[RMDB]
RNA sequence: GGGAACGACUCGAGUAGAGUCGAAAACAUCGGAUGCGCCGCACAGCUGAUAUGGAACGUUGUGGAAUGGUGUCUGAAGGCGCCAAUGCGUGGGAUGCUGUGGGCCUCUGGGAAGCCCUGGCAGCCGCGUGUGGGCUAAAUUCGUUUAGCCCACACGAAAAGAAACAACAACAACAAC
Reactivity to 2A3 in 0.01 (KOAc 150mM, MgCl2 10mM, bicine 150mM(pH8.5), 24C), signal-to-noise 3, nucleotides 027 to 126: c020a070u120c020g030g000a060u080g040c040g000c040c020g110c030a020c000a010g050c010u070g030a060u090a070u300g200g050a080a010c020g040u030u040g060u090g050g100a080a140u080g010g000u030g080u020c040u110g250a200a100g030g020c020g020c020c020a060a030u100g010c030g020u060g030g040g020a040u020g020c000u020g010u080g060g010g000c010c010u080c030u070g060g040g020a050a010g010c010c000c000u010g040g000c030a020g040c030c020g000
Reactivity to DMS in 0.01 (KOAc 150mM, MgCl2 10mM, bicine 150mM(pH8.5), 24C), signal-to-noise 2, nucleotides 027 to 126: c110a100u010c040g000g000a020u000g010c090g010c010c020g010c020a030c010a030g000c000u020g010a130u000a120u010g010g010a160a100c120g010u010u010g010u000g000g020a150a140u010g010g020u000g000u000c030u000g000a210a110g010g000c070g010c020c040a030a080u000g000c020g040u020g000g000g000a120u000g020c000u000g020u010g000g000g010c000c030u000c060u010g000g010g010a090a120g000c020c000c000u000g000g000c030a060g010c030c060g000
This 177-nucleotide RNA was probed chemically with 2A3 and DMS. The data come from the RNA Mapping Database (RMDB), library OK2TST. For 2A3, 2,669 sequencing reads were counted. For DMS the reverse transcriptase was MarathonRT. In probing experiments dimethyl sulfate is read out at A N1 and C N3, which are open when not base-paired. For 2A3 the reverse transcriptase was SuperScript II with manganese.